This 177-nucleotide RNA was probed chemically with 2A3 and DMS. DMS adducts were read by reverse transcription with MarathonRT. For 2A3 the reverse transcriptase was SuperScript II with manganese. High DMS reactivity at an A or C suggests that its Watson-Crick edge is free. The 2A3 profile rests on 4,389 reads. Reactivities are given for positions 27 through 126. Conditions: 150 mM KOAc, 10 mM MgCl2 and 150 mM bicine (pH 8.5), 24 C.
[RMDB]
RNA sequence: GGGAACGACUCGAGUAGAGUCGAAAAGGACAGCUGCACCAGUAUGGAGCACAGAGGGCAUGGGUCUGAGACUGGAGGCCAUUGUCAUGGUGUGACAGGAAGAGACACCUGAAGUGAAGUGCUGGCCCUGCAUCUUUAUCUUCGGAUAAAGAUGCAGAAAAGAAACAACAACAACAAC
Reactivity to 2A3 in 0.01 (KOAc 150mM, MgCl2 10mM, bicine 150mM(pH8.5), 24C), signal-to-noise 3, nucleotides 027 to 126: g050g020a020c020a010g020c040u110g020c070a070c000c010a020g040u080a090u140g060g050a050g030c030a010c040a060g110a080g000g040g000c060a070u150g250g000g010u020c020u040g030a030g060a090c020u040g030g030a040g100g010c020c000a040u060u180g150u140c100a030u080g070g000u020g010u020g060a030c010a020g040g040a060a020g060a010g000a040c010a030c000c000u030g030a050a000g030u030g060a080a020g030u020g080c000u010g020g000c020c010
Reactivity to DMS in 0.01 (KOAc 150mM, MgCl2 10mM, bicine 150mM(pH8.5), 24C), signal-to-noise 5, nucleotides 027 to 126: g020g010a070c080a090g010c040u010g030c060a140c040c030a120g010u000a060u010g020g020a150g030c050a060c060a070g000a260g020g010g030c150a110u010g020g010g010u000c020u010g010a130g020a120c050u000g000g000a130g010g010c020c020a040u000u030g020u010c140a060u000g000g010u000g000u010g010a160c050a060g010g010a090a170g000a120g010a080c050a090c020c010u000g000a140a100g010u000g000a090a120g010u000g000c020u010g010g000c030c050